The data come from the RNA Mapping Database (RMDB), library OK2TST. An RNA of 177 nucleotides, treated with 2A3 and DMS and read out base by base.
RNA sequence: GGGAACGACUCGAGUAGAGUCGAAAAACUCAGAGUGGCCAGAGCCCUUUUGUGUCGAUCCGACUAACGCAGUUGUUUUCUACCUCUAUCGGCUGCAUGCAAUUGCAGAGGGGAAAGUCAUGACGGGAUUGAAGGCUAAGUUCGCUUAGCCUUCAAUAAAAGAAACAACAACAACAAC
Reactivity to 2A3 in 0.01 (KOAc 150mM, MgCl2 10mM, bicine 150mM(pH8.5), 24C), signal-to-noise 1, nucleotides 027 to 126: a000c010u000c020a010g010a010g070u100g000g030c060c110a080g030a040g140c010c010c040u100u000u040u110g060u030g000u020c020g130a130u080c130c040g000a010c050u020a020a050c100g050c090a050g010u040u030g030u020u090u000u060c020u060a110c000c040u080c020u080a150u220c090g090g010c000u000g000c020a020u060g000c020a030a100u130u050g030c000a000g000a030g060g030g040g010a030a030a030g050u010c010a020u070g050a070c040g000g020g100
Reactivity to DMS in 0.01 (KOAc 150mM, MgCl2 10mM, bicine 150mM(pH8.5), 24C), signal-to-noise 3, nucleotides 027 to 126: a160c020u000c020a060g000a250g040u010g000g010c030c080a140g010a220g010c030c020c010u000u000u000u000g010u000g010u010c020g020a130u010c080c050g000a070c010u000a080a110c120g010c070a040g010u000u000g010u000u000u000u000c010u010a140c040c010u000c070u020a130u000c150g010g020c030u000g020c060a010u000g010c110a030a090u010u000g010c040a060g000a090g020g000g000g010a050a100a110g010u000c040a020u000g000a180c170g000g000g000